[RMDB]
About this RNA: Structure probing data (DMS and 2A3) for a 177-nucleotide construct. For 2A3, 8,988 sequencing reads were counted. 2A3 adducts were read by reverse transcription with SuperScript II with manganese. Conditions: 150 mM KOAc, 10 mM MgCl2 and 150 mM bicine (pH 8.5), 24 C. Source: RMDB library M2PK50, as collected in RNAgym. For DMS the reverse transcriptase was MarathonRT. The DMS profile rests on 2,121 reads.

RNA sequence: GGGAACGACUCGAGUAGAGUCGAAAACAGACCAAGUUCGCUUGGUCUGAAAGAAAGCGGAAAGCACCUGGGAGGGAAGGUGCGGGCCGCAACCACCCAUAAAAAGUACGAUCUUCGGAUCGUACAACAAGGUCUUAGUGUUCGCACUAAGACCUUGAAAAGAAACAACAACAACAAC
Reactivity to DMS in 0.01 (KOAc 150mM, MgCl2 10mM, bicine 150mM(pH8.5), 24C), signal-to-noise 3, nucleotides 027 to 126: c010a000g010a010c000c000a010a000g010u000u040c260g020c010u010u000g000g010u000c000u000g010a040a060a080g000a100a130a150g010c000g000g000a040a050a240g000c010a020c000c000u010g000g010g010a120g000g010g020a160a010g000g020u000g010c000g000g000g010c000c020g000c010a020a090c130c090a170c010c000c020a130u020a030a070a070a090a110g010u000a010c000g020a020u000c000u010u000c200g030g000a010u000c010g010u010a000c010a040a100
Reactivity to 2A3 in 0.01 (KOAc 150mM, MgCl2 10mM, bicine 150mM(pH8.5), 24C), signal-to-noise 3, nucleotides 027 to 126: c010a010g000a000c000c000a000a000g010u020u040c120g010c170u000u000g000g000u010c000u000g000a000a000a000g050a030a070a000g010c000g000g010a050a020a010g010c000a000c000c000u040g030g130g050a160g030g030g030a040a020g010g000u000g000c000g010g030g010c010c000g010c010a000a010c010c020a020c010c010c000a050u260a070a150a010a010a000g000u000a000c010g000a010u000c010u030u100c210g060g000a000u000c010g000u000a000c000a000a010